[RMDB]
RNA sequence: GGGAACGACUCGAGUAGAGUCGAAAAGAUAUGGAGAAUCUGGUUAAUCUAUGAAGUAUUUCGGAAACGAAAUAUGGAGAUUACCAGAGUUCUCCUAAGUCAAAACGUGGAGGUUCGCCUCCACGAAGGUAUAAUACGAGUUCGCUCGUAUUAUACCAAAAGAAACAACAACAACAAC
Reactivity to 2A3 in 0.01 (KOAc 150mM, MgCl2 10mM, bicine 150mM(pH8.5), 24C), signal-to-noise 6, nucleotides 027 to 126: g020a030u090a050u150g010g010a020g020a000a030u000c010u010g000g050u160u300a060a010u000c030u080a300u300g020a010a010g010u010a010u000u020u000c010g010g030a080a030a030c000g000a000a000a010u010a010u020g010g010a010g000a020u030u010a000c010c000a010g010a010g010u010u000c000u000c000c000u000a050a010g050u000c030a000a010a110a220c020g000u000g000g010a010g000g040u110u120c290g110c080c010u010c000c000a000c000g000a000a010
Reactivity to DMS in 0.01 (KOAc 150mM, MgCl2 10mM, bicine 150mM(pH8.5), 24C), signal-to-noise 5, nucleotides 027 to 126: g000a050u010a300u010g010g010a020g010a020a100u000c000u000g000g010u000u000a010a010u000c000u000a290u020g000a120a210g000u000a000u000u000u000c010g010g000a140a120a220c010g010a000a000a000u000a000u010g000g000a010g010a010u000u000a030c000c000a010g000a030g010u010u000c010u000c000c000u000a010a090g020u010c060a090a070a100a210c000g030u000g000g000a030g000g010u000u010c260g000c000c000u000c000c000a010c000g000a020a020
Structure probing data (2A3 and DMS) for a 177-nucleotide construct. For 2A3 the reverse transcriptase was SuperScript II with manganese. For DMS, 7,109 sequencing reads were counted. High 2A3 reactivity points to a flexible backbone, as in loops and unpaired stretches. Values are in units of 0.01, from 0 to 300, in steps of 10.